The data come from the RNA Mapping Database (RMDB), library TTRINS. This 177-nucleotide RNA was probed chemically with DMS. The reactions ran in a buffer of 150 mM KOAc, 10 mM MgCl2 and 150 mM bicine (pH 8.5), at 24 C. For DMS the reverse transcriptase was MarathonRT.

[RMDB]
RNA sequence: GGGAACGACUCGAGUAGAGUCGAAAAGAUAUGGAAGCAAGCGUCAUAACAUGACUUCGAUAAGAUGCCAUCGGAAACGAUGGGCAUCUUUUGACGAAGGAGUGUUAUGACGCUUGCUUCCUAAGUCCUAAGUUGAGGAGUUCGCUCCUCAACUUAGAAAAGAAACAACAACAACAAC
Reactivity to DMS in 0.01 (KOAc 150mM, MgCl2 10mM, bicine 150mM(pH8.5), 24C), signal-to-noise 3, nucleotides 027 to 126: g000a110u000a290u000g000g010a000a010g020c010a010a000g010c000g040u000c010a010u000a020a020c010a010u000g000a300c000u010u000c000g020a190u010a020a010g010a020u010g030c000c000a030u000c000g010g000a190a140a210c010g000a020u010g010g060g000c000a000u010c000u010u000u010u000g010a230c160g000a020a010g020g010a300g010u000g000u000u000a010u000g010a000c010g010c000u000u000g000c000u000u000c000c000u000a010a060g000u000c040